[RMDB]
Overview:
The record gives the reactivity of an RNA of 177 nucleotides to 2A3 and DMS. The 2A3 profile rests on 2,683 reads.
RNA sequence: GGGAACGACUCGAGUAGAGUCGAAAACGAUGGGCGCCGCUUCGGUAGCAGGGGGUGUGCCUUGCGGGCUUUCUGAACUCUGGGCCGCGAGCUCGGCUUCUAGCGAAUCCACGAACUGGCCCAGCAGCCGAAAACGAAUUUUCGAAUUCGUUUUCGGAAAAGAAACAACAACAACAAC
Reactivity to 2A3 in 0.01 (KOAc 150mM, MgCl2 10mM, bicine 150mM(pH8.5), 24C), signal-to-noise 4, nucleotides 027 to 126: c040g020a060u090g020g040g000c080g040c030c020g070c060u070u050c080g060g030u070a070g030c090a070g030g020g000g020g070u060g040u040g040c010c010u010u050g020c040g030g040g000c010u030u140u040c040u070g080a070a030c000u010c010u040g000g040g000c020c010g030c090g020a030g030c030u030c000g010g020c010u050u010c040u090a050g020c040g070a020a030u030c020c000a040c050g030a100a030c050u100g020g000c000c000c000a000g020c000a010g010
Reactivity to DMS in 0.01 (KOAc 150mM, MgCl2 10mM, bicine 150mM(pH8.5), 24C), signal-to-noise 2, nucleotides 027 to 126: c120g000a120u000g010g000g020c020g010c040c000g000c070u010u000c030g010g030u030a150g060c040a110g020g000g000g000g000u000g020u000g000c020c010u000u000g000c090g000g000g010c060u000u000u000c030u000g010a090a160c070u030c030u000g000g000g000c020c000g010c070g000a150g000c130u000c080g010g010c060u000u000c020u000a120g000c190g010a080a070u000c020c010a140c080g000a090a060c110u060g010g000c000c000c000a030g000c120a060g010